Structure probing data (DMS and 2A3) for a 207-nucleotide construct.
It was measured as part of the RMDB library OK3TST.
Conditions: 150 mM KOAc, 10 mM MgCl2 and 150 mM bicine (pH 8.5), 24 C.

RNA sequence: GGGAACGACUCGAGUAGAGUCGAAAAUGGCUCCAAUACAUUCGAUGAUGUGUGCAAUCUUUUUGUUACACAAGAAAUUUAUGAGGGUGACAAUGGAACCAACGAGGUGAUGCACGCAUAUAUCGUUUACAGGUUUCAGAUCUCUCUAGACGGAGCAACUUGAUUUCAAUUUCGAUUGAAAUCAAGUAAAAGAAACAACAACAACAAC
Reactivity to DMS in 0.01 (KOAc 150mM, MgCl2 10mM, bicine 150mM(pH8.5), 24C), signal-to-noise 4, nucleotides 027 to 156: u020g030g040c010u010c010c000a140a150u000a110c080a070u000u020c050g010a110u000g020a130u000g030u000g010u000g010c000a050a100u000c120u020u010u010u000u000g010u000u000a040c040a050c010a090a140g000a080a130a120u000u000u000a070u020g000a150g000g010g020u010g010a100c090a070a140u000g020g010a040a040c020c040a030a080c050g010a110g010g020u000g000a080u000g000c060a080c120g020c040a060u000a110u000a070u000c010g010u000u000u000a090c080a080g000g010u010u000u000c020a090g000a120u000c030u000c000u010c030u000a110g010a140c070g010g000a040g030c020a100
Reactivity to 2A3 in 0.01 (KOAc 150mM, MgCl2 10mM, bicine 150mM(pH8.5), 24C), signal-to-noise 6, nucleotides 027 to 156: u080g120g000c000u000c010c000a030a050u140a110c060a060u070u070c050g080a070u100g010a030u050g060u000g010u010g000c010a020a140u110c130u040u240u060u030u040g020u070u240a010c020a000c010a030a050g110a070a140a060u220u280u170a120u200g040a050g060g040g000u040g020a020c040a040a130u090g030g010a020a020c010c010a030a040c070g050a040g040g060u070g040a050u090g030c040a020c150g020c030a000u100a020u010a020u070c000g000u000u020u050a100c090a050g000g080u010u030u020c020a030g010a090u020c010u000c010u000c010u070a020g030a060c070g010g000a000g010c000a000
Overview:
The DMS profile rests on 9,941 reads.